The data come from the RNA Mapping Database (RMDB), library TTRDEL.
This 177-nucleotide RNA was probed chemically with DMS and 2A3.
The RNA was probed in 150 mM KOAc, 10 mM MgCl2 and 150 mM bicine (pH 8.5) at 24 C.
RNA sequence: GGGAACGACUCGAGUAGAGUCGAAAAGAUAUGGAACGAAUCCUAUGAAGAACGAUGAAAGAGAUCGGAAACGAUCUCUGGAGUUCUGUAGGACUAUUCCUAAGUCAAACGGUGCUUCGGCACCGAACCCUACAACCUUGUUCGCAAGGUUGUAGGGAAAAGAAACAACAACAACAAC
Reactivity to DMS in 0.01 (KOAc 150mM, MgCl2 10mM, bicine 150mM(pH8.5), 24C), signal-to-noise 3, nucleotides 027 to 126: g010a050u000a270u010g000g010a010a020c060g000a060a140u020c000c000u010a010u000g020a110a030g010a010a020c010g010a080u000g000a120a080a040g000a010g010a000u000c000g010g000a080a080a140c000g020a010u000c000u000c000u000g000g000a020g010u000u000c000u000g000u000a000g000g010a010c080u000a150u000u000c000c000u010a020a110g000u000c020a040a090a220c030g000g010u000g000c010u000u020c220g030g000c010a000c020c010g020a030a030
Reactivity to 2A3 in 0.01 (KOAc 150mM, MgCl2 10mM, bicine 150mM(pH8.5), 24C), signal-to-noise 2, nucleotides 027 to 126: g000a010u070a010u080g020g010a070a000c050g050a160a150u000c010c020u030a020u070g300a200a300g000a010a000c020g300a300u030g000a000a020a010g000a000g000a000u000c000g000g000a000a030a030c000g000a000u010c000u040c010u000g010g000a000g020u000u000c010u040g020u010a000g000g020a010c040u090a090u030u020c010c000u030a070a010g030u040c060a150a010a040c020g000g000u000g000c000u050u070c190g190g000c030a010c000c010g010a000a000
DMS adducts were read by reverse transcription with MarathonRT. For 2A3 the reverse transcriptase was SuperScript II with manganese. 2A3 is a SHAPE reagent: it acylates the 2'-hydroxyl of flexible nucleotides of all four kinds.